The record gives the reactivity of an RNA of 177 nucleotides to DMS. Values cover nucleotides 27 to 126. It was measured as part of the RMDB library TTRDES. Conditions: 150 mM KOAc, 10 mM MgCl2 and 150 mM bicine (pH 8.5), 24 C. The DMS profile rests on 963 reads.
RNA sequence: GGGAACGACUCGAGUAGAGUCGAAAAAAAAGAUAUGGAUCAAGCUCUCUUGGAUUUAUGUGCGAAAGUACAUCGGAAACGAUGUAUGAGUAGCACAUUGUCAGAGAGUCUUGAUCCUAAGUCAAAACUUGAACGAAUACUUCGGUAUUCGUUCAAGAAAAGAAACAACAACAACAAC
Reactivity to DMS in 0.01 (KOAc 150mM, MgCl2 10mM, bicine 150mM(pH8.5), 24C), signal-to-noise 1, nucleotides 027 to 126: a060a010a120a050g000a010u000a300u000g000g000a000u000c000a000a000g010c000u000c000u010c000u010u000g050g010a030u000u010u000a000u000g040u010g000c000g000a170a080a300g010u010a010c000a010u000c000g010g010a110a050a210c000g010a000u000g030u000a000u000g010a050g020u010a020g000c000a000c010a010u000u000g040u010c020a010g000a010g000a000g000u010c010u000u000g010a010u000c000c000u010a010a050g000u000c030a040a070a240a130